An RNA of 177 nucleotides, treated with 2A3 and read out base by base. The RNA was probed in 150 mM KOAc, 10 mM MgCl2 and 150 mM bicine (pH 8.5) at 24 C. 2A3 adducts were read by reverse transcription with SuperScript II with manganese. High 2A3 reactivity points to a flexible backbone, as in loops and unpaired stretches. Values cover nucleotides 27 to 126.
RNA sequence: GGGAACGACUCGAGUAGAGUCGAAAAUCGUUUUUGUGUUAUUUGCUGGAAGUUACAUCCAAAGCCAGUGAUUGUCAAACAGAACGUAAAUUAAUGCGGCUAUCACUCCACAAUGUUGAGCCGGCUUUCUGUUGUGUGGUUUCGACCACACAACAGAAAAAGAAACAACAACAACAAC
Reactivity to 2A3 in 0.01 (KOAc 150mM, MgCl2 10mM, bicine 150mM(pH8.5), 24C), signal-to-noise 1, nucleotides 027 to 126: u000c010g000u000u000u000u010u010g070u000g060u050u080a150u120u010u000g000c000u000g020g000a090a080g010u080u120a020c020a110u160c190c060a130a000a000g000c060c060a000g000u020g000a000u000u000g230u060c110a220a000a000c010a000g000a060a000c010g000u100a040a040a040u100u110a170a000u120g000c000g000g000c000u020a000u300c000a060c020u110c000c000a060c000a150a230u110g000u040u000g010a000g000c000c000g000g060c000u000u000